This 207-nucleotide RNA was probed chemically with 2A3 and DMS.
The RNA was probed in 150 mM KOAc, 10 mM MgCl2 and 150 mM bicine (pH 8.5) at 24 C.
The data come from the RNA Mapping Database (RMDB), library M2RFPK.
RNA sequence: GGGAACGACUCGAGUAGAGUCGAAAAAACCCGUUGAUUGAAAUUGAACCGUCCUGUUAUCGAAAGAUAGGCAGAAGAUACGAAAUGUGUGACAGCAUGGGAAAUAAAGGCAGACCGUGGUUCCCUUAAAAUCGUCGAAUCUUCGGAUUCGACGAAACUCUAGUAAUGUGUUCGCACAUUACUAGAGAAAAGAAACAACAACAACAAC
Reactivity to 2A3 in 0.01 (KOAc 150mM, MgCl2 10mM, bicine 150mM(pH8.5), 24C), signal-to-noise 1, nucleotides 027 to 156: a000a010c030c010c010g000u000u040g100a300u040u100g040a090a110a110u040u050g010a040a090c010c020g030u070c000c010u010g060u070u060a020u050c050g090a040a060a040g040a040u020a020g080g000c010a000g020a120a000g040a020u070a110c070g060a030a040a070u050g030u000g020u020g020a000c030a040g000c000a000u070g070g000g020a010a060a010u110a070a110a010g040g000c040a040g050a070c020c050g010u040g020g020u030u020c040c000c000u010u030a070a080a040a040u050c000g000u010c000g000a000a000u000c000u050u020c100g050g010a000u000u000c000g000a000c000g000a000a000a000
Reactivity to DMS in 0.01 (KOAc 150mM, MgCl2 10mM, bicine 150mM(pH8.5), 24C), signal-to-noise 2, nucleotides 027 to 156: a120a110c010c000c030g070u000u010g010a150u000u000g000a040a230a080u000u000g010a120a110c000c060g000u010c010c020u010g040u000u000a100u000c010g000a200a110a180g000a060u010a070g010g000c010a030g000a140a040g000a150u000a140c090g000a080a100a060u000g020u020g040u010g010a120c080a150g010c070a070u010g010g040g000a010a060a060u010a060a060a110g020g000c040a010g000a090c040c040g020u000g030g010u000u000c000c000c010u000u020a030a010a090a080u000c000g040u010c000g010a010a010u000c010u010u000c260g040g030a020u000u000c000g000a010c010g010a000a010a060